[RMDB]
RNA sequence: GGGAACGACUCGAGUAGAGUCGAAAAGCGUUCAGAAAGUAACUUUUUUCUGGCCAGCAAAACGCGAUAUAUAUUUUUGAUAUCCUGAGCAUACCCCUUGCGCUGCACAAUGAGCUUUUUGCUCGGCAACUACCUCUAUGUUCGCAUAGAGGUAGUUAAAAGAAACAACAACAACAAC
Reactivity to 2A3 in 0.01 (KOAc 150mM, MgCl2 10mM, bicine 150mM(pH8.5), 24C), signal-to-noise 9, nucleotides 027 to 126: g030c020g030u110u100c020a020g050a040a040a010g080u220a200a300c150u170u150u040u000u020u020c020u020g030g000c020c010a030g020c030a040a030a020a040c030g010c050g030a000u010a000u010a010u000a130u080u120u050u090u110g110a060u040a050u060c010c010u030g030a010g020c020a030u080a190c010c000c000c000u030u060g020c050g000c020u040g010c030a020c030a090a220u170g020a010g020c010u050u090u040u140u180g010c010u010c010g020g000c010
Reactivity to DMS in 0.01 (KOAc 150mM, MgCl2 10mM, bicine 150mM(pH8.5), 24C), signal-to-noise 6, nucleotides 027 to 126: g000c050g020u010u010c030a040g010a060a010a030g020u040a090a160c210u000u030u020u000u000u000c020u000g010g000c040c030a090g000c040a050a060a040a040c080g010c050g010a080u010a040u010a080u030a020u010u020u020u020u010g000a060u000a050u010c020c000u000g010a090g010c070a100u020a090c030c020c000c070u000u010g000c030g010c010u000g010c080a060c120a080a110u030g000a060g000c020u010u010u030u020u020g000c000u000c020g020g000c100
The record gives the reactivity of an RNA of 177 nucleotides to 2A3 and DMS. Values cover nucleotides 27 to 126. For 2A3 the reverse transcriptase was SuperScript II with manganese. The 2A3 profile rests on 14,103 reads. For DMS the reverse transcriptase was MarathonRT. The RNA was probed in 150 mM KOAc, 10 mM MgCl2 and 150 mM bicine (pH 8.5) at 24 C. It was measured as part of the RMDB library OK1LIB.